[RMDB]
RNA sequence: GGGAACGACUCGAGUAGAGUCGAAAAUGAAGAUUGCAGUCGUAAAGUAAAAGGACGGUCCAGGCACUUGCGCUUUUUUGCCUGCAAAGAAUUCCGGUUUGCCGGUUUUCCCGGCGUCCAGUUUUGGACCACUCCAUCAAUUCGUUGAUGGAGUGGUAAAAGAAACAACAACAACAAC
Reactivity to DMS in 0.01 (KOAc 150mM, MgCl2 10mM, bicine 150mM(pH8.5), 24C), signal-to-noise 3, nucleotides 027 to 126: u010g010a110a120g010a120u010u000g000c020a040g020u000c030g000u020a040a050a060g000u000a060a150a060a040g000g020a080c060g010g010u030c120c130a080g000g020c160a080c020u000u030g010c250g000c010u000u000u000u010u000u020g000c020c010u010g000c020a020a060a130g010a100a100u010u000c050c020g000g020u030u020u020g000c020c010g000g010u000u010u010u010c150c010c020g010g030c070g000u000c050c050a090g000u020u020u010u000g000g000
Reactivity to 2A3 in 0.01 (KOAc 150mM, MgCl2 10mM, bicine 150mM(pH8.5), 24C), signal-to-noise 4, nucleotides 027 to 126: u180g000a040a020g100a060u020u050g020c010a000g030u040c000g070u060a010a020a130g020u030a020a030a010a090g080g010a050c070g010g010u040c060c060a080g050g020c070a020c100u040u100g020c030g030c050u060u030u010u010u120u150g000c000c000u000g010c000a000a030a060g060a050a060u080u030c000c000g020g040u060u070u140g060c020c020g030g030u030u010u070u080c010c010c000g030g010c030g010u000c010c000a020g020u030u060u120u080g020g010